RNA sequence: GGGAACGACUCGAGUAGAGUCGAAAAUAUAUCAAUGCGAACAAAAAAUGUUCGAUUGCUGUUUGAAAAGUGUCGAGGUCGCUACAGAGUGACGUAAGUGCAAUGUCAUGUUCUUAACGAACGAGACUUGAAUAUGACACUUCGGUGUCAUAUUCAAAAAAGAAACAACAACAACAAC
Reactivity to 2A3 in 0.01 (KOAc 150mM, MgCl2 10mM, bicine 150mM(pH8.5), 24C), signal-to-noise 4, nucleotides 027 to 126: u190a000u030a010u030c020a020a010u110g250c020g020a000a030c020a000a100a040a100a060a190u100g000u000u000c000g010a000u000u010g010c070u060g060u150u120u110g190a160a130a060a040g120u140g010u040c000g030a020g070g000u010c010g000c010u000a030c080a100g100a010g050u010g010a030c010g030u040a060a080g090u110g180c080a120a040u120g010u020c020a010u030g080u130u020c000u030u080a040a020c040g000a020a010c010g020a000g000a030c000
Reactivity to DMS in 0.01 (KOAc 150mM, MgCl2 10mM, bicine 150mM(pH8.5), 24C), signal-to-noise 6, nucleotides 027 to 126: u040a070u030a090u020c040a050a030u020g000c010g010a000a000c010a010a060a140a120a130a110u000g000u000u000c000g010a080u000u000g010c100u010g010u000u000u010g010a070a080a090a090g020u020g010u010c010g000a300g010g010u000c010g000c030u000a050c250a030g020a120g010u000g010a010c010g010u010a030a110g030u030g020c280a080a050u010g000u000c000a030u010g010u010u000c000u000u010a080a120c050g000a010a010c010g010a190g000a020c010